[RMDB]
RNA sequence: GGGAACGACUCGAGUAGAGUCGAAAACGCCCUCUUGGGGGGCUUCCUAUUUCAAAUGGCAACAAGGCAGAGGAGAAGAAGAUAACGUCAGAGGCGUUGGAACCUUCGAAAUCUUCAACCCCGGAGGCGUUAUACGCGGGUUCGCCCGCGUAUAACGAAAAGAAACAACAACAACAAC
Reactivity to DMS in 0.01 (KOAc 150mM, MgCl2 10mM, bicine 150mM(pH8.5), 24C), signal-to-noise 2, nucleotides 027 to 126: c070g010c080c010c000u020c080u010u090g040g010g010g050g000g020c010u000u020c000c000u000a050u000u030u070c120a080a100a070u000g000g000c280a180a050c180a150a050g010g000c060a040g010a040g000g000a190g000a040a060g020a120a030g020a260u030a010a020c030g010u000c020a100g000a130g020g010c040g030u020u010g020g010a080a100c080c000u000u000c010g020a130a260a120u000c010u000u030c040a160a120c010c000c020c000g000g010a040g020g020
Reactivity to 2A3 in 0.01 (KOAc 150mM, MgCl2 10mM, bicine 150mM(pH8.5), 24C), signal-to-noise 3, nucleotides 027 to 126: c020g030c000c050c000u010c070u230u300g070g010g000g010g040g020c000u040u020c010c000u030a140u030u200u080c100a080a050a030u160g040g010c030a030a050c010a130a080g110g000c000a010g000a030g030g030a040g010a080a000g030a000a000g020a040u020a030a010c010g000u010c020a070g030a120g240g010c000g000u020u000g050g060a040a050c020c000u000u010c000g070a050a000a070u000c000u080u060c030a030a050c010c000c010c030g020g000a010g000g000